RNA sequence: GGGAACGACUCGAGUAGAGUCGAAAAGACUAUUGUUUCCAUUUUACAGAGGAGGAAACAAUAUGGAAGUGACUAAUUACUUGAAGAUGACAGUGAUGGUACUAGCACUCAGACUGGAGUCUUCUUCCUCCAUUCUUGUGUUUUAUUCAUUAUAUCAUAAUUAUGGCUAGUUCGCUAGCCAUAAUUAAAAAGAAACAACAACAACAAC
Reactivity to 2A3 in 0.01 (KOAc 150mM, MgCl2 10mM, bicine 150mM(pH8.5), 24C), signal-to-noise 4, nucleotides 027 to 156: g030a010c040u030a020u020u000g020u000u020u000c020c010a040u080u150u110u190a130c130a060g120a100g150g090a040g040g000a060a000a000c000a010a030u050a090u090g020g070a060a060g080u040g030a010c040u090a160a140u160u100a060c050u060u070g030a080a030g040a100u080g020a010c070a040g050u030g040a080u030g020g030u050a060c050u060a080g080c040a000c040u090c010a020g040a080c020u010g000g010a010g030u000c030u030u020c010u070u040c060c020u000c000c000a060u070u040c020u110u060g040u000g010u070u010u050u120a110u080u070c010a030u050u290a100u130a040u300c070a030
Reactivity to DMS in 0.01 (KOAc 150mM, MgCl2 10mM, bicine 150mM(pH8.5), 24C), signal-to-noise 2, nucleotides 027 to 156: g040a120c070u010a010u010u000g010u000u000u010c000c000a230u000u010u010u010a300c100a240g010a160g030g060a280g020g010a010a010a030c020a000a050u000a020u000g000g040a100a110g020u000g000a160c090u010a080a110u010u000a070c060u000u000g010a140a110g000a120u010g010a230c080a080g030u010g010a110u000g000g000u000a060c080u000a110g040c050a040c010u000c100a090g010a050c050u000g020g000a220g030u010c050u000u010c110u010u010c070c000u000c010c030a080u000u020c060u000u000g000u000g030u040u000u020u000a030u000u010c020a050u010u000a170u000a150u000c010a160
Source: RMDB library OK3TST, as collected in RNAgym. Chemical mapping of a 207-nucleotide RNA with 2A3 and DMS. The reactions ran in a buffer of 150 mM KOAc, 10 mM MgCl2 and 150 mM bicine (pH 8.5), at 24 C. 2A3 adducts were read by reverse transcription with SuperScript II with manganese. DMS adducts were read by reverse transcription with MarathonRT.